[RMDB]
RNA sequence: GGGAACGACUCGAGUAGAGUCGAAAAGAUCGCUUUUGCAGUGUAUCUAUUAUUUACACCUGCACUAGCUGCAGCAUUCAGUGACCAAGUAUGGUUAGUUGAUUUUAGUAAACUAGCAACUGAUAUCACGAGCGACCUAAUUCGUUAGGUCGCUCGUAAAAGAAACAACAACAACAAC
Reactivity to 2A3 in 0.01 (KOAc 150mM, MgCl2 10mM, bicine 150mM(pH8.5), 24C), signal-to-noise 1, nucleotides 027 to 126: g010a040u130c000g020c000u000u000u010u000g000c000a010g120u000g030u000a000u000c090u000a250u020u110a090u000u140u010a100c200a000c010c010u010g000c000a000c030u010a010g000c070u010g000c000a060g040c000a000u190u190c000a030g040u070g080a120c090c000a100a080g120u100a060u200g110g000u000u000a000g000u050u090g070a190u300u000u000u000a030g000u130a030a050a000c000u000a000g000c000a020a010c000u000g000a050u050a040u300c090